[RMDB]
RNA sequence: GGGAACGACUCGAGUAGAGUCGAAAAAUUGCAAUACGCUUUCAGGCAGAAAGCAAGCAAAGCAUCGCCUCGACAACUCCGCCAAUUGGAUUUUAUCUCCCAAUUCUCAACGGAGAUAGUGUACAAAAAUUAUAGUGGUAUUCGUACCACUAUAAUUAAAAGAAACAACAACAACAAC
Reactivity to DMS in 0.01 (KOAc 150mM, MgCl2 10mM, bicine 150mM(pH8.5), 24C), signal-to-noise 8, nucleotides 027 to 126: a070u010u010g010c030a080a100u040a120c180g000c020u000u000u000c020a150g020g020c270a160g010a020a020a020g010c020a110a160g000c040a030a040a080g000c090a090u010c060g000c020c010u010c050g020a070c090a080a090c040u000c010c060g010c030c090a050a080u010u000g000g000a090u000u030u030u020a020u010c050u010c030c000c100a060a070u010u010c040u000c080a100a150c250g000g000a020g000a030u000a020g010u030g010u020a070c140a050a050a070
Reactivity to 2A3 in 0.01 (KOAc 150mM, MgCl2 10mM, bicine 150mM(pH8.5), 24C), signal-to-noise 9, nucleotides 027 to 126: a000u060u040g010c030a040a060u090a170c110g000c000u020u020u020c070a220g210g000c040a050g060a030a020a000g010c030a030a010g020c020a050a040a010g030c010a050u070c040g040c020c010u040c010g040a030c020a100a050c020u010c010c010g010c020c020a040a090u050u060g080g010a080u050u050u070u120a050u040c040u020c000c000c000a020a070u120u030c060u020c060a040a060c020g020g000a000g010a010u040a030g100u100g020u040a090c080a050a110a030
Description
Chemical mapping of a 177-nucleotide RNA with DMS and 2A3. DMS adducts were read by reverse transcription with MarathonRT. 2A3 adducts were read by reverse transcription with SuperScript II with manganese. For 2A3, 17,634 sequencing reads were counted. The reactions ran in a buffer of 150 mM KOAc, 10 mM MgCl2 and 150 mM bicine (pH 8.5), at 24 C. The data come from the RNA Mapping Database (RMDB), library OK1LIB.